[RMDB]
RNA sequence: GGGAACGACUCGAGUAGAGUCGAAAAGAUAUGGAUUGUGGGAGCUCCAUCACUACCCACCUCGGAAACGAGAGGUGAUGAGAGCAUCGAUCACAAUCCUAAGUCAAAACGCAUGUUCGCAUGCGAAGUAGCAGUACCUCUUCGGAGGUACUGCUACAAAAGAAACAACAACAACAAC
Reactivity to DMS in 0.01 (KOAc 150mM, MgCl2 10mM, bicine 150mM(pH8.5), 24C), signal-to-noise 1, nucleotides 027 to 126: g000a090u000a240u000g000g000a000u010u000g000u010g010g010g000a070g000c000u000c000c000a060u000c010a000c090u000a120c070c020c070a300c080c000u010c000g090g030a090a150a220c030g000a000g000a100g000g000u000g000a030u010g000a190g040a000g000c000a230u000c130g020a100u000c000a000c000a020a030u000c000c000u010a030a040g010u020c150a110a080a040a130c000g000c000a000u030g000u000u000c120g000c000a000u000g000c000g000a070a030
Reactivity to 2A3 in 0.01 (KOAc 150mM, MgCl2 10mM, bicine 150mM(pH8.5), 24C), signal-to-noise 2, nucleotides 027 to 126: g040a010u190a030u300g000g000a000u000u030g000u040g030g010g020a030g000c000u020c010c000a010u000c020a030c040u200a230c050c020c000a030c020c010u000c000g030g000a110a060a040c010g000a010g030a050g040g040u010g010a010u000g100a120g030a000g300c010a010u300c040g020a060u020c010a000c000a000a020u050c000c000u000a060a000g120u090c130a000a000a120a110c030g000c000a020u010g000u100u240c300g060c150a010u030g000c000g030a050a060

Structure probing data (DMS and 2A3) for a 177-nucleotide construct.
Reactivities are given for positions 27 through 126.
For DMS, 650 sequencing reads were counted.
The RNA was probed in 150 mM KOAc, 10 mM MgCl2 and 150 mM bicine (pH 8.5) at 24 C.
For 2A3, 1,814 sequencing reads were counted.
It was measured as part of the RMDB library TTRDEL.